This 177-nucleotide RNA was probed chemically with DMS and 2A3. The RNA was probed in 150 mM KOAc, 10 mM MgCl2 and 150 mM bicine (pH 8.5) at 24 C. 2A3 adducts were read by reverse transcription with SuperScript II with manganese. For DMS the reverse transcriptase was MarathonRT.

[RMDB]
RNA sequence: GGGAACGACUCGAGUAGAGUCGAAAACACAUCAGCGUUCUGGAGGCGUGGAGCCUGAAUGAUAAUCAUUACAAUGACAAGACCGAUGGUGCGGCACUGGCAAUGGAGAAUAAGCAACGUCUGGCGCCUCUACAGUAACAUUCGUGUUACUGUAGAGAAAAGAAACAACAACAACAAC
Reactivity to DMS in 0.01 (KOAc 150mM, MgCl2 10mM, bicine 150mM(pH8.5), 24C), signal-to-noise 9, nucleotides 027 to 126: c090a120c110a060u000c050a050g010c090g020u000u000c040u000g010g010a070g010g000c040g030u000g000g020a130g000c030c010u000g000a070a040u010g010a110u010a110a110u010c050a030u000u010a100c170a100a070u000g000a070c090a080a080g000a080c060c040g010a060u000g010g020u000g010c070g000g010c050a050c050u000g000g010c040a040a070u000g000g000a080g010a060a070u010a080a090g000c060a040a080c090g010u000c020u000g010g010c090g010c140
Reactivity to 2A3 in 0.01 (KOAc 150mM, MgCl2 10mM, bicine 150mM(pH8.5), 24C), signal-to-noise 9, nucleotides 027 to 126: c060a000c010a050u070c030a010g030c030g060u060u000c020u060g070g050a030g010g010c040g030u080g060g100a020g000c000c020u020g030a030a050u050g040a040u110a170a050u100c020a010u030u130a090c070a110a130u110g050a040c030a070a050g060a060c000c040g050a060u070g030g050u060g010c030g020g000c020a010c070u030g030g010c020a020a090u090g040g010a100g030a100a080u140a120a020g020c030a030a020c020g030u010c030u030g050g020c010g020c000